[RMDB]
RNA sequence: GGGAACGACUCGAGUAGAGUCGAAAAAUAAAUUGGUUCGAGAACUCAGAAUUAUGGGAAAGUUCGACAGUCGAAGUAGAUAAAAUCUAUUACCAAUUGGAACUAGUACGGGUAAAAUAGGAUUCUUCUUCUCCCUCUCGUACAUGAUGUAUGCGUGAACAUACUGUCCGUUCGCGGACAGUAUGUUAAAAGAAACAACAACAACAAC
Reactivity to DMS in 0.01 (KOAc 150mM, MgCl2 10mM, bicine 150mM(pH8.5), 24C), signal-to-noise 2, nucleotides 027 to 156: a090u000a010a100a110u000u000g000g030u000u010c090g020a300g000a110a080c040u010c060a190g040a090a120u000u000a040u010g030g030g020a160a100a090g010u000u000c010g030a140c090a080g000u010c030g020a050a040g020u010a000g010a040u020a040a110a040a300u000c010u000a020u000u000a160c070c010a030a110u000u010g010g000a040a080c080u000a040g010u000a000c010g040g040g020u000a030a030a000a140u010a070g010g000a060u000u010c260u000u000c090u020u000c040u000c000c010c000u000c010u010c010g000u010a040c010a100u010g030a110u010g000u010a060u010g000c060g030u020g000
Reactivity to 2A3 in 0.01 (KOAc 150mM, MgCl2 10mM, bicine 150mM(pH8.5), 24C), signal-to-noise 3, nucleotides 027 to 156: a000u110a010a030a010u020u010g000g000u050u060c040g010a010g000a150a050c020u020c050a050g030a150a140u260u130a110u230g050g000g010a070a040a020g010u010u010c000g030a030c050a020g060u090c030g020a050a010g030u020a010g010a020u100a080a120a020a070u040c010u000a040u040u040a070c000c000a010a040u050u090g070g060a050a030c040u050a080g010u030a020c010g040g000g000u060a060a090a080a130u120a060g030g070a070u130u010c050u210u000c000u140u040c010u050c060c000c000u010c000u000c000g010u010a030c040a050u110g060a020u080g080u160a050u150g120c080g040u110g100